[RMDB]
RNA sequence: GGGAACGACUCGAGUAGAGUCGAAAAAGAACUAGCGAUUGUAAAAGGCUGUUUGCGCUAAGAUAUGGAAUUAGCGCAAAUAGGUCCGAAUUCCUUGAUUACAUUUCGGACAACCGCGCUAAAACAACGCAUCUUUUAUAUUCGUAUAAAAGAUGCGAAAAGAAACAACAACAACAAC
Reactivity to DMS in 0.01 (KOAc 150mM, MgCl2 10mM, bicine 150mM(pH8.5), 24C), signal-to-noise 5, nucleotides 027 to 126: a090g010a130a110c150u000a060g030c000g020a070u010u010g000u010a050a080a130a120g000g010c000u000g010u000u000u000g000c010g010c000u000a000a000g010a160u020a270u020g000g010a100a140u000u000a000g000c000g000c000a010a000a020u000a010g010g000u000c000c000g000a010a030u010u000c120c100u010u010g010a110u010u010a090c170a090u000u000u000c000g010g010a020c020a030a040c050c040g000c000g020c130u000a030a060a050a070c150a060a120
Reactivity to 2A3 in 0.01 (KOAc 150mM, MgCl2 10mM, bicine 150mM(pH8.5), 24C), signal-to-noise 4, nucleotides 027 to 126: a010g050a020a010c030u020a010g000c010g040a050u050u210g080u210a060a070a050a050g050g040c010u000g000u010u000u000g000c000g000c000u020a010a010g040a150u180a160u300g110g020a070a130u010u000a010g000c000g000c000a000a000a000u000a000g000g000u010c000c000g000a000a020u090u050c020c000u040u060g030a020u040u090a090c060a140u030u050u050c000g000g000a010c000a050a020c050c030g030c000g010c040u020a070a080a030a030c050a040a010
The record gives the reactivity of an RNA of 177 nucleotides to DMS and 2A3. The RNA was probed in 150 mM KOAc, 10 mM MgCl2 and 150 mM bicine (pH 8.5) at 24 C. DMS adducts were read by reverse transcription with MarathonRT. Reactivities are given for positions 27 through 126. For DMS, 5,108 sequencing reads were counted.